Structure probing data (2A3 and DMS) for a 177-nucleotide construct.
For 2A3 the reverse transcriptase was SuperScript II with manganese.
For 2A3, 1,342 sequencing reads were counted.
The data come from the RNA Mapping Database (RMDB), library OK2TRN.
RNA sequence: GGGAACGACUCGAGUAGAGUCGAAAAGAAGCAACAUUAUAUGAAGUGCCUUUUGAUGAGAUUCCAAAAGAUCUACAACUUGUUAAGUACUCUUAUGAUGGUGAAAAAUUCUAUUUGACUGAGUUUACACUAUAUAGUCCUUCGGGACUAUAUAGUGAAAAGAAACAACAACAACAAC
Reactivity to 2A3 in 0.01 (KOAc 150mM, MgCl2 10mM, bicine 150mM(pH8.5), 24C), signal-to-noise 2, nucleotides 027 to 126: g000a040a000g000c010a010a030c010a020u020u050a060u030a020u100g170a170a030g000u010g030c000c030u020u180u050u050g010a010u080g030a030g010a040u130u140c050c010a060a020a040a140g010a010u000c000u090a200c040a060a070c050u060u090g050u170u040a050a000g030u030a020c000u000c000u010u000a000u040g010a000u020g000g090u070g120a090a030a090a030a040u040u050c040u070a130u060u020u050g080a080c090u020g060a060g060u010u080u070a010
Reactivity to DMS in 0.01 (KOAc 150mM, MgCl2 10mM, bicine 150mM(pH8.5), 24C), signal-to-noise 4, nucleotides 027 to 126: g000a050a110g010c020a010a030c010a010u010u000a030u000a020u000g010a130a020g020u000g000c030c050u010u000u010u000g010a110u000g010a070g000a030u000u010c040c070a100a060a110a230g000a010u000c010u000a100c050a030a050c110u000u000g000u010u010a050a100g010u000a020c000u000c010u000u000a020u000g000a010u000g000g010u000g000a030a040a040a060a110u010u000c000u000a080u000u000u000g010a090c060u000g000a090g010u000u000u000a110